Chemical mapping of a 177-nucleotide RNA with DMS. For DMS the reverse transcriptase was MarathonRT. It was measured as part of the RMDB library M2PK90.
RNA sequence: GGGAACGACUCGAGUAGAGUCGAAAAAAAAACGCAACGACUCGACUAGAGUCGAAAAGGGAACGACUCGAGUAGAGUCGAAAAACAAACGACUCGAGUAGAGUCGAAGCGAACCCAACCCAAAAAACAUUAUUAGACGAUUCGUCGUCUAAUAAUGAAAAGAAACAACAACAACAAC
Reactivity to DMS in 0.01 (KOAc 150mM, MgCl2 10mM, bicine 150mM(pH8.5), 24C), signal-to-noise 1, nucleotides 027 to 126: a030a000a060a060a150c100g000c040a000a190c020g000a000c000u020c000g000a050c000u000a190g000a020g030u000c000g000a000a040a070a100g000g000g000a020a020c000g000a000c000u000c000g000a030g000u000a020g000a000g000u000c000g000a000a020a050a180a000c000a000a080a150c000g000a020c000u000c000g010a050g010u000a070g010a020g010u000c000g000a010a220g010c040g010a070a070c010c010c010a090a090c000c010c020a000a030a070a060a050a080